An RNA of 207 nucleotides, treated with 2A3 and read out base by base. As a SHAPE reagent, 2A3 marks flexible, mostly unpaired nucleotides at the ribose 2'-OH. Conditions: 150 mM KOAc, 10 mM MgCl2 and 150 mM bicine (pH 8.5), 24 C. 2A3 adducts were read by reverse transcription with SuperScript II with manganese.
RNA sequence: GGGAACGACUCGAGUAGAGUCGAAAAGGGGUCUUCGACGGAAGCUCCGUUGUCAGGUCGCAGCUCUGAAGCCUCCACGGAGCUGACCCGACCUUGGAUUUACGGAGCCCGUCGAAGACGGAGGCACCCAAAACUAAGGCUCUUCGGAGCCUUAGAACGCGUUCAGCUUGUUCGCAAGCUGAACGCGAAAAGAAACAACAACAACAAC
Reactivity to 2A3 in 0.01 (KOAc 150mM, MgCl2 10mM, bicine 150mM(pH8.5), 24C), signal-to-noise 1, nucleotides 027 to 156: g040g010g010g020u000c010u010u000c000g000a010c010g010g010a190a120g000c000u000c000c000g000u010u040g030u020c070a020g000g030u000c000g000c050a000g000c000u000c010u010g070a180a060g050c010c000u000c000c010a020c000g000g020a030g000c030u000g030a090c030c110c030g000a010c000c010u050u180g100g010a040u260u190u240a010c010g000g000a000g000c010c000c000g000u000c000g000a000a000g000a000c010g000g000a000g010g040c000a040c020c010c000a050a070a020a050c000u000a000a000g010g000c000u010c010u040u180c300g080g000a000g030c000c000u000u000a000g000a000a000